Background
Conditions: 150 mM KOAc, 10 mM MgCl2 and 150 mM bicine (pH 8.5), 24 C. The record gives the reactivity of an RNA of 170 nucleotides to DMS and 2A3. For DMS the reverse transcriptase was MarathonRT. For DMS, 2,430 sequencing reads were counted.

[RMDB]
RNA sequence: GGGAACGACUCGAGUAGAGUCGAAAAAAUUCUUGAUUGCGGGACCAAAAGGACCUGAAAUCCGAUAUCUCUAUUUUGUUAAAAAUCUUAACAACCUUCAUCGCGGGCAAGUGUUAGGGCACAUUGCAUACGGAGCGGUUCGCCGCUCCGAAAAGAAACAACAACAACAAC
Reactivity to DMS in 0.01 (KOAc 150mM, MgCl2 10mM, bicine 150mM(pH8.5), 24C), signal-to-noise 1, nucleotides 027 to 129: a010a170u130u000c040u040u010g000a060u020u020g000c090g000g030g020a200c000c050a080a060a250a160g130g020a080c060c060u050g000a000a000a240u040c000c300g050a030u000a020u000c080u040c000u000a060u040u030u000u000g000u000u010a000a040a140a210a030u110c040u000u100a020a060c020a130a090c300c070u000u020c020a000u010c000g020c070g040g020g010c050a040a000g030u000g000u040u040a190g000g000g000c180a070c040a010u000u150g000c100a000u000a090
Reactivity to 2A3 in 0.01 (KOAc 150mM, MgCl2 10mM, bicine 150mM(pH8.5), 24C), signal-to-noise 1, nucleotides 027 to 129: a000a040u080u000c040u080u090g000a020u000u160g090c010g010g000g000a040c100c200a100a060a080a020g000g000a090c000c000u040g000a060a070a070u000c000c000g060a010u000a090u010c000u000c060u000a040u080u290u030u040g010u000u000a060a000a000a000a000u000c000u000u030a060a030c040a010a070c000c000u120u080c060a110u120c010g020c040g020g030g000c030a020a000g000u000g150u110u120a100g000g010g000c000a000c000a050u010u030g000c000a030u000a100